Annotation
This 177-nucleotide RNA was probed chemically with DMS and 2A3. The reactions ran in a buffer of 150 mM KOAc, 10 mM MgCl2 and 150 mM bicine (pH 8.5), at 24 C. For DMS the reverse transcriptase was MarathonRT.
[RMDB]
RNA sequence: GGGAACGACUCGAGUAGAGUCGAAAAAGAUCACACCUCGGCGGAGCAGGAGGACCAACGAACCCGUCUUCUUGGUUGGGGUAUUUCUCAACGAUGGCGGAUGCCAGCCUCUCCACGACUCCUCACCGAUGGAAUCUUGGUUCGCCAAGAUUCCAUCAAAAGAAACAACAACAACAAC
Reactivity to DMS in 0.01 (KOAc 150mM, MgCl2 10mM, bicine 150mM(pH8.5), 24C), signal-to-noise 2, nucleotides 027 to 126: a110g000a030u000c110a070c040a030c070c020u000c050g020g020c110g000g010a110g020c000a100g040g000a040g030g040a110c060c280a060a080c180g000a040a110c030c000c010g000u040c020u000u000c020u000u000g130g000u000u030g000g000g000g000u020a080u000u110u020c000u000c000a000a000c000g000a020u000g000g020c010g000g020a040u000g000c130c040a000g010c090c050u010c040u000c020c010a050c090g000a300c010u000c000c000u000c150a210c030c020
Reactivity to 2A3 in 0.01 (KOAc 150mM, MgCl2 10mM, bicine 150mM(pH8.5), 24C), signal-to-noise 5, nucleotides 027 to 126: a000g110a050u140c040a040c010a030c050c010u010c020g040g000c040g000g010a010g040c040a030g020g020a010g000g060a040c010c050a060a050c060g050a050a040c030c000c000g010u010c000u070u010c040u100u230g130g010u020u020g030g010g000g010u120a300u110u270u080c020u000c000a020a050c030g040a010u030g000g010c020g050g000a040u110g040c010c000a020g020c010c000u030c010u020c020c000a060c050g070a080c010u010c000c000u030c030a050c020c060